[RMDB]
The record gives the reactivity of an RNA of 177 nucleotides to 2A3 and DMS. For 2A3 the reverse transcriptase was SuperScript II with manganese. The DMS profile rests on 1,204 reads. The data come from the RNA Mapping Database (RMDB), library VIROID.
RNA sequence: GGGAACGACUCGAGUAGAGUCGAAAAUCCACCUUGGAGUGCCCUAUUCGGAGCACUGCAGUUCCCGAUAGAAAGGCUAAGCACCUCGCAAUGAGGUAAGGUGGGACUUUUCCUUCUGGAACCAAGCCUGGCUAAUAUACUUCGGUAUAUUAGCCAGAAAAGAAACAACAACAACAAC
Reactivity to 2A3 in 0.01 (KOAc 150mM, MgCl2 10mM, bicine 150mM(pH8.5), 24C), signal-to-noise 2, nucleotides 027 to 126: u020c000c000a000c030c030u060u050g150g080a130g140u080g120c000c050c000u070a110u040u160c050g020g000a100g030c050a060c160u140g000c020a010g000u010u020c000c000c000g010a020u010a020g030a000a080a010g010g000c030u060a050a040g170c020a030c000c000u030c010g010c120a220a300u290g000a000g000g000u010a000a010g020g020u020g000g000g020a020c000u040u090u020u030c000c020u040u120c080u140g070g030a070a070c040c030a060a020g050c010
Reactivity to DMS in 0.01 (KOAc 150mM, MgCl2 10mM, bicine 150mM(pH8.5), 24C), signal-to-noise 2, nucleotides 027 to 126: u000c020c000a020c030c040u000u000g010g000a080g020u030g010c020c010c010u000a110u010u000c290g010g020a080g030c030a100c130u020g050c150a150g010u000u000c040c000c030g000a060u000a040g030a070a070a070g000g010c010u010a070a160g020c150a070c010c000u010c000g000c160a130a110u020g000a010g010g000u000a020a020g010g020u010g010g020g020a070c100u000u000u000u000c000c030u000u000c100u000g000g000a090a080c070c070a080a130g010c170